[RMDB]
RNA sequence: GGGAACGACUCGAGUAGAGUCGAAAAGAUAUGGACAGCUUGGAGGACCCGAGCUCCCGUGUCGGAAACGACACGGCCCUCGCCUAUGAAGAGCUGUCCUAAGUCAAAAGUCCUCUUCGGAGGACAAUCAGAUACCAUGGUUCGCCAUGGUAUCUGAAAAAGAAACAACAACAACAAC
Reactivity to 2A3 in 0.01 (KOAc 150mM, MgCl2 10mM, bicine 150mM(pH8.5), 24C), signal-to-noise 1, nucleotides 027 to 126: g000a000u060a020u090g000g000a000c000a000g010c000u020u020g010g010a040g050g020a040c190c100c260g050a010g000c020u130c010c030c010g010u010g000u000c000g000g090a010a030a080c000g010a010c000a000c020g000g000c020c050c010u000c060g030c000c030u300a300u220g030a020a010g000a000g020c000u000g020u000c010c000u000a040a010g020u000c000a050a030a000a140g000u040c020c010u000c000u020u080c260g190g000a000g010g010a000c000a000a070
Reactivity to DMS in 0.01 (KOAc 150mM, MgCl2 10mM, bicine 150mM(pH8.5), 24C), signal-to-noise 2, nucleotides 027 to 126: g020a040u010a300u020g010g010a040c010a000g000c000u000u000g000g000a210g000g000a170c090c210c020g020a030g040c010u000c030c010c000g000u010g010u000c000g020g020a110a060a190c000g020a010c000a000c000g010g000c300c230c010u000c000g010c050c010u000a110u020g010a300a100g000a000g010c000u000g000u000c020c010u000a050a010g000u010c020a050a070a090a110g000u010c000c000u010c000u000u000c200g050g010a020g000g000a010c000a000a050